[RMDB]
Conditions: 150 mM KOAc, 10 mM MgCl2 and 150 mM bicine (pH 8.5), 24 C. An RNA of 177 nucleotides, treated with DMS and 2A3 and read out base by base. Values cover nucleotides 27 to 126.
RNA sequence: GGGAACGACUCGAGUAGAGUCGAAAAGAUAUGGACCGAAUAAGCCGAAGAACGGAUAACAUAUCGGAAACGAUAUGCUAAUACGGGAGGCUUACGGUCCUAAGUCAAAGUUACGUUCGCGUAACAACCUAGGUGUAUUGUUCGCAAUACACCUAGGAAAAGAAACAACAACAACAAC
Reactivity to DMS in 0.01 (KOAc 150mM, MgCl2 10mM, bicine 150mM(pH8.5), 24C), signal-to-noise 4, nucleotides 027 to 126: g020a020u000a300u010g000g000a010c010c000g020a140a150u000a020a010g020c010c010g000a170a090g010a190a110c030g000g000a050u010a070a070c000a010u010a000u000c000g020g000a090a060a180c000g010a000u000a000u000g020c010u000a070a060u010a100c020g000g000g010a140g010g020c000u000u000a060c010g010g010u000c000c010u010a010a050g000u000c030a060a090a120g000u000u000a000c000g010u000u010c250g020c030g000u000a010a010c000a120a150
Reactivity to 2A3 in 0.01 (KOAc 150mM, MgCl2 10mM, bicine 150mM(pH8.5), 24C), signal-to-noise 4, nucleotides 027 to 126: g020a000u030a020u130g000g010a000c010c010g020a170a270u060a060a010g010c030c070g130a180a050g090a230a060c040g000g020a020u050a090a010c000a000u000a000u000c000g030g000a020a040a020c010g000a000u000a000u020g020c040u060a070a030u260a220c020g020g050g060a050g000g010c000u000u000a010c010g010g000u000c000c000u000a030a000g000u020c020a150a040a110g010u000u010a010c020g020u030u120c300g000c010g140u000a010a020c030a030a090
DMS adducts were read by reverse transcription with MarathonRT.